RNA sequence: GGGAACGACUCGAGUAGAGUCGAAAAUGAGCUUGCCCGACGCUUCUGCACGCCGGAUAACUGCCUUGUGGUGGUACUAUGCAACAACCGAUUUCUGUUCCGCCUGGAACGUGCACCCGGUAGCCACCGCGUCAUAUACGUUCGCGUAUAUGACGCGAAAAGAAACAACAACAACAAC
Reactivity to 2A3 in 0.01 (KOAc 150mM, MgCl2 10mM, bicine 150mM(pH8.5), 24C), signal-to-noise 2, nucleotides 027 to 126: u110g010a030g010c010u040u060g040c000c020c000g010a010c020g010c020u040u090c010u070g000c020a020c060g030c030c030g080g000a030u050a120a080c020u050g040c030c000u070u150g040u120g040g020u000g000g050u050a040c020u050a050u140g010c040a060a020c000a040a020c040c040g130a140u000u130u020c020u030g020u030u010c020c020g030c090c130u090g010g020a050a010c010g000u020g000c000a040c030c040c000g040g030u020a050g000c000c020a060c010
Reactivity to DMS in 0.01 (KOAc 150mM, MgCl2 10mM, bicine 150mM(pH8.5), 24C), signal-to-noise 3, nucleotides 027 to 126: u010g000a100g020c080u000u010g000c020c040c030g030a070c140g000c050u000u000c020u000g010c080a130c070g010c040c040g000g020a050u010a090a080c040u010g010c050c050u000u010g010u000g040g030u010g010g020u000a130c070u010a080u000g010c050a070a080c110a070a130c080c050g000a130u000u000u000c050u010g020u000u000c000c000g010c170c140u000g000g000a030a040c050g010u010g000c100a120c180c030c020g000g010u000a070g010c020c040a070c080